[RMDB]
RNA sequence: GGGAACGACUCGAGUAGAGUCGAAAAGCGUACUACAAGAGACAUGCUCUAUGGAGCACAACAGCGCUCCCAAAUAGGAGCGACAUGUGUGAGGUAGAGCAACAGCUCUUGUAUCGCAAAACGAUGCCUAGUUUACUUCGGUAAACUAGGCAUCGAACAUUGACUUGUACUUCGGUACAAGUCAAUGAAAAGAAACAACAACAACAAC
Reactivity to DMS in 0.01 (KOAc 150mM, MgCl2 10mM, bicine 150mM(pH8.5), 24C), signal-to-noise 3, nucleotides 027 to 156: g030c020g020u010a080c100u000a060c000a010a030g030a040g010a030c110a300u000g000c000u000c000u000a010u000g030g010a300g020c010a020c020a020a110c080a210g000c020g010c000u000c010c000c000a020a160a240u030a040g000g000a030g030c000g020a030c150a300u000g010u000g000u000g010a300g000g000u000a040g010a040g010c010a080a030c040a110g030c000u000c010u010u000g000u000a030u010c040g000c000a020a070a100a190c010g010a030u000g010c000c000u000a010g000u020u000u000a010c020u000u000c300g070g000u000a000a000a000c000u000a000g010g020c000a000u010c000g030a040a090
Reactivity to 2A3 in 0.01 (KOAc 150mM, MgCl2 10mM, bicine 150mM(pH8.5), 24C), signal-to-noise 4, nucleotides 027 to 156: g000c020g040u120a100c050u000a010c020a000a010g000a000g020a070c030a180u040g000c000u000c000u010a020u060g110g080a050g040c010a010c020a080a050c050a090g030c010g000c010u090c010c040c030a210a300a110u300a100g000g000a000g030c000g080a060c040a080u050g000u000g010u050g010a060g060g050u010a000g010a020g000c020a000a010c010a020g010c000u020c000u000u000g000u000a010u160c000g000c000a010a010a000a080c010g000a000u000g000c000c000u000a000g010u000u000u000a020c010u030u050c300g060g000u000a000a000a000c000u000a000g000g000c000a000u000c000g000a000a000